[RMDB]
RNA sequence: GGGAACGACUCGAGUAGAGUCGAAAAGAUAUGGAUUGGCCAGCUAGCGUGUCGGAAACGACGAACGCUUGGACCUGGCAAUCCUAAGUCAAACGUAGUGUAAUUCGUUCGCGAAUUACACUACGAAGCACUAUUAAGUCUUCGGACUUAAUAGUGCAAAAGAAACAACAACAACAAC
Reactivity to DMS in 0.01 (KOAc 150mM, MgCl2 10mM, bicine 150mM(pH8.5), 24C), signal-to-noise 5, nucleotides 027 to 126: g010a040u010a300u010g010g000a030u000u000g020g030c010c010a020g010c030u000a010g030c000g080u000g000u000c000g000g010a110a080a210c020g010a010c010g010a170a030c010g010c000u000u010g020g010a110c300c000u000g000g000c000a010a000u000c000c000u000a030a100g010u000c050a100a110a300c010g010u010a010g010u000g010u000a010a020u000u000c000g010u000u030c260g020c020g010a010a010u000u000a000c000a000c000u000a000c000g000a030a070
Reactivity to 2A3 in 0.01 (KOAc 150mM, MgCl2 10mM, bicine 150mM(pH8.5), 24C), signal-to-noise 4, nucleotides 027 to 126: g020a010u070a030u180g010g000a010u000u040g300g230c000c010a010g030c010u010a000g010c010g000u030g030u030c010g020g060a120a070a090c020g020a010c010g070a200a050c000g010c000u020u110g050g030a090c030c030u000g000g000c000a000a000u000c000c000u020a150a020g050u020c050a120a040a060c000g000u000a000g020u000g000u000a000a000u020u000c000g030u050u060c300g010c010g180a000a000u000u000a000c000a000c000u000a000c000g000a010a000
The data come from the RNA Mapping Database (RMDB), library TTRDEL. An RNA of 177 nucleotides, treated with DMS and 2A3 and read out base by base. The reactions ran in a buffer of 150 mM KOAc, 10 mM MgCl2 and 150 mM bicine (pH 8.5), at 24 C. 2A3 adducts were read by reverse transcription with SuperScript II with manganese.